[RMDB]
RNA sequence: GGGAACGACUCGAGUAGAGUCGAAAAUACCAGCUCGCCGAGCUGGCCACGAUGGCGCACCGUCAAGGCGUCUUCAACGUCAUGAAGGCCAUGCUGAACUCCCGCCUGGGCGACUUCGUGGGCGCCAAGUAGACUUAACCUUCGGGUUAAGUCUACUAAAAGAAACAACAACAACAAC
Reactivity to 2A3 in 0.01 (KOAc 150mM, MgCl2 10mM, bicine 150mM(pH8.5), 24C), signal-to-noise 2, nucleotides 027 to 126: u070a030c000c000a040g030c000u020c090g300c230c230g000a010g040c010u000g000g000c010c000a030c030g030a050u070g000g000c010g000c070a180c190c010g070u130c080a050a050g010g000c010g000u000c000u070u060c090a080a030c070g130u110c060a070u030g140a070a040g080g030c030c010a050u110g010c030u050g050a020a050c040u030c060c020c000g000c040c010u040g000g020g050c010g040a030c040u030u020c070g040u050g020g010g010c000g000c000c000a000
Reactivity to DMS in 0.01 (KOAc 150mM, MgCl2 10mM, bicine 150mM(pH8.5), 24C), signal-to-noise 3, nucleotides 027 to 126: u010a200c040c010a050g000c000u000c050g020c220c140g000a010g030c010u000g000g010c000c000a010c110g020a070u010g000g000c030g000c050a190c020c030g000u000c100a100a060g040g000c010g000u000c070u000u020c130a060a140c180g010u000c070a090u020g020a110a110g000g000c130c150a040u010g020c050u000g010a080a090c130u010c040c070c030g000c070c060u000g000g000g010c000g010a020c030u000u010c060g030u000g010g000g000c050g010c000c000a060